RNA sequence: GGGAACGACUCGAGUAGAGUCGAAAAGUGUCCGCACUAAGUUCGGCAUCAAUAUGGUGACCUCCCGGGAGCGGGGGACCACCAGGUUGCCUAAGGAGGGGUGAACCGGCCCAGGUCGGAAACGGAGCAGGUCAAAACUCCCGUGCUGAUCAGUAGUACAUUUCUCAUACUUCGGUAUGAGAAAUGUAAAAGAAACAACAACAACAAC
Reactivity to 2A3 in 0.01 (KOAc 150mM, MgCl2 10mM, bicine 150mM(pH8.5), 24C), signal-to-noise 1, nucleotides 027 to 156: g140u120g030u070c040c000g040c010a000c010u070a090a040g100u150u150c030g040g000c000a010u030c010a050a140u120a100u280g000g030u010g030a080c010c010u030c000c020c040g030g100g090a160g080c100g010g000g000g010g030a070c110c000a000c000c010a010g020g020u000u000g010c000c010u030a020a030g050g010a030g000g000g000g060u030g020a090a030c000c000g010g000c000c030c000a020g070g000u060c060g040g040a110a130a060c000g000g010a070g000c040a010g060g010u090c010a000a060a060a120c020u010c010c030c030g030u020g000c000u030g020a060u030c050a040g180u150a010g070u010